The record gives the reactivity of an RNA of 207 nucleotides to DMS and 2A3. The DMS profile rests on 4,896 reads.

RNA sequence: GGGAACGACUCGAGUAGAGUCGAAAACUAACGGUUUCGACCGUUAGAAAAAACCUUUGUGUCCUUGUUUGCUUUGAUCUAUGUAAGCCCAUUGGGCUUGACAUAGGGAGCAAACAUUGGGACACUCUGGUAAAAAACUGAUCGUUCGCGAUCAGAAGUAGUAGACUAACUUCGGUUAGUCUACUACAAAAGAAACAACAACAACAAC
Reactivity to DMS in 0.01 (KOAc 150mM, MgCl2 10mM, bicine 150mM(pH8.5), 24C), signal-to-noise 2, nucleotides 027 to 156: c000u010a010a010c030g020g010u010u000u000c240g010a040c000c000g040u000u000a000g010a000a030a110a100a110a070c000c010u000u000u000g020u000g010u010c010c010u010u000g000u000u000u000g010c010u010u010u000g020a120u010c000u000a010u010g010u000a050a020g010c000c000c010a300u000u000g060g030g010c010u000u000g020a020c010a010u010a030g000g000g000a010g020c000a010a010a010c000a010u000u020g040g010g010a030c020a000c000u000c050u010g000g030u010a000a050a060a090a130a140c000u000g010a010u000c000g030u000u010c300g000c060g000a000u000c000a020g000a080a120
Reactivity to 2A3 in 0.01 (KOAc 150mM, MgCl2 10mM, bicine 150mM(pH8.5), 24C), signal-to-noise 6, nucleotides 027 to 156: c000u000a010a000c000g000g040u040u090u180c250g120a050c010c000g000u000u000a010g000a040a050a000a000a010a000c020c000u020u020u010g000u000g000u000c000c010u020u030g010u010u000u000g010c010u180u140u100g090a110u150c000u000a000u000g000u000a000a000g000c000c020c100a300u230u300g020g000g000c000u000u010g030a010c000a000u000a010g000g000g000a000g000c000a000a000a000c000a000u010u210g050g000g000a000c000a000c000u000c000u000g000g000u080a130a090a020a070a000a020c010u010g000a000u000c000g040u100u050c300g000c010g130a060u010c010a000g080a080a010

Description
For 2A3, 7,444 sequencing reads were counted. Values cover nucleotides 27 to 156. Reactivities are rounded to 0.1 and cut off at 0 and 3. Conditions: 150 mM KOAc, 10 mM MgCl2 and 150 mM bicine (pH 8.5), 24 C. The data come from the RNA Mapping Database (RMDB), library RNAMAK.